[RMDB]
RNA sequence: GGGAACGACUCGAGUAGAGUCGAAAAGUAUUAUUUGCUAAAGAGCAACUUUAGGUUGCUGAAAAUGACUUAUGGGUAGUGGAAUAGGUUAACCGUAAGACCUUUGGUUGAAAAACUAUGAAAUUAAAAAACCGUAAUACGUUCGCGUAUUACGGAAGUAUGUGUAUACCUUCGGGUAUACACAUACAAAAGAAACAACAACAACAAC
Reactivity to 2A3 in 0.01 (KOAc 150mM, MgCl2 10mM, bicine 150mM(pH8.5), 24C), signal-to-noise 3, nucleotides 027 to 156: g040u010a040u240u070a110u030u270u110g000c000u090a090a050a010g070a030g000c000a000a010c010u160u090u100a190g070g000u010u000g000c010u010g040a050a030a040a080u070g010a010c030u070u050a020u120g070g020g030u050a070g060u020g070g120a080a090u020a130g040g050u070u090a040a000c040c000g030u020a020a030g030a040c010c000u010u020u120g020g000u040u040g040a090a070a030a080a010c030u040a130u270g080a110a100a160u110u230a160a130a020a010a010a000c000c000g000u000a000a000u000a000c000g000u000u030c190g020c040g090u010a000u000u000a010c000g000g000a000a000
Reactivity to DMS in 0.01 (KOAc 150mM, MgCl2 10mM, bicine 150mM(pH8.5), 24C), signal-to-noise 2, nucleotides 027 to 156: g020u000a030u010u020a090u000u000u010g020c000u000a050a070a180g000a080g030c010a010a060c010u010u000u020a170g020g000u000u000g040c000u000g010a030a070a040a130u010g010a100c050u010u000a010u000g020g020g020u000a030g050u000g000g020a070a140u000a030g000g040u000u000a080a150c040c020g000u000a130a150g060a160c050c060u000u000u010g030g020u000u000g010a110a140a120a040a040c090u010a060u020g000a050a090a150u000u070a030a080a060a080a060a160c010c010g020u000a000a000u000a010c000g030u010u000c300g050c020g050u000a010u000u000a010c000g000g030a000a060